Source information
An RNA of 177 nucleotides, treated with DMS and 2A3 and read out base by base. The RNA was probed in 150 mM KOAc, 10 mM MgCl2 and 150 mM bicine (pH 8.5) at 24 C.
RNA sequence: GGGAACGACUCGAGUAGAGUCGAAAACUGAGCUGGUCAAGGGCCUGCUGCUGUCAGGCCUCUAUAUAUAGACAGCAUGGCACUAUCUCAGCUGACGAGCCCACUGUUGGUCUCUCUGAUUAACAUGGCUGAGGAAAUGGUUCGCCAUUUCCUCAGCAAAAGAAACAACAACAACAAC
Reactivity to DMS in 0.01 (KOAc 150mM, MgCl2 10mM, bicine 150mM(pH8.5), 24C), signal-to-noise 2, nucleotides 027 to 126: c090u000g000a070g030c050u000g010g010u010c110a130a100g000g010g010c000c000u000g020c170u020g020c090u000g010u020c030a100g000g020c040c090u040c030u000a060u020a150u010a120u010a090g000a060c030a020g010c020a060u000g000g000c010a030c050u000a120u000c040u000c010a070g000c010u000g020a050c140g000a070g000c060c010c040a090c130u000g000u010u000g010g000u010c010u010c250u000c160u000g000a050u000u000a030a030c070a070u030g000
Reactivity to 2A3 in 0.01 (KOAc 150mM, MgCl2 10mM, bicine 150mM(pH8.5), 24C), signal-to-noise 1, nucleotides 027 to 126: c020u040g010a000g040c000u010g050g040u080c070a130a040g030g000g000c000c010u020g100c090u050g030c000u040g050u030c020a010g030g090c000c000u000c000u040a050u010a000u000a010u040a050g050a000c010a010g000c020a100u130g030g040c010a010c080u070a080u100c100u000c050a050g000c000u010g060a140c050g030a040g020c010c030c040a040c030u010g110u090u020g030g040u060c090u030c010u040c100u080g020a070u050u000a020a000c020a130u200g110

Values cover nucleotides 27 to 126. For 2A3, 962 sequencing reads were counted.